Structure probing data (DMS and 2A3) for a 177-nucleotide construct.
For DMS, 735 sequencing reads were counted.
It was measured as part of the RMDB library OK2TST.
The 2A3 profile rests on 765 reads.
Reactivities are given for positions 27 through 126.
For DMS the reverse transcriptase was MarathonRT.
RNA sequence: GGGAACGACUCGAGUAGAGUCGAAAAUUAGAACGGAAUACACUCCUUUCAGACUUAUGCACUUUAAACAUCUCUGACGAAAUUCCUAUAGAGAUGCAGGAAGGUCAAUGUAUCUCCAUACCAUGGAGGGUCUUAGAUGAUUCGUCAUCUAAGACCCAAAAGAAACAACAACAACAAC
Reactivity to DMS in 0.01 (KOAc 150mM, MgCl2 10mM, bicine 150mM(pH8.5), 24C), signal-to-noise 1, nucleotides 027 to 126: u000u030a160g010a130a110c060g000g000a040a020u000a090c010a010c100u020c010c000u000u000u000c000a070g010a100c020u000u000a200u000g030c110a050c070u000u000u000a080a140a150c040a010u000c000u000c020u000g010a080c160g000a030a090a120u000u000c090c070u000a090u020a010g000a030g000a000u000g020c090a100g000g000a080a000g000g030u000c090a050a080u030g000u000a000u000c120u000c000c000a080u010a090c130c130a070u000g010g020a300
Reactivity to 2A3 in 0.01 (KOAc 150mM, MgCl2 10mM, bicine 150mM(pH8.5), 24C), signal-to-noise 1, nucleotides 027 to 126: u150u040a060g070a110a040c100g010g000a030a010u060a020c050a010c040u000c000c000u000u050u040c070a050g010a060c000u150u120a150u240g000c060a110c120u150u110u240a080a110a040c030a010u040c000u000c000u050g050a030c040g070a070a090a140u190u000c000c000u030a030u050a070g010a010g000a000u010g000c010a000g040g030a000a000g000g010u060c080a070a050u010g010u020a040u010c120u000c010c000a040u130a150c070c070a080u150g050g030a050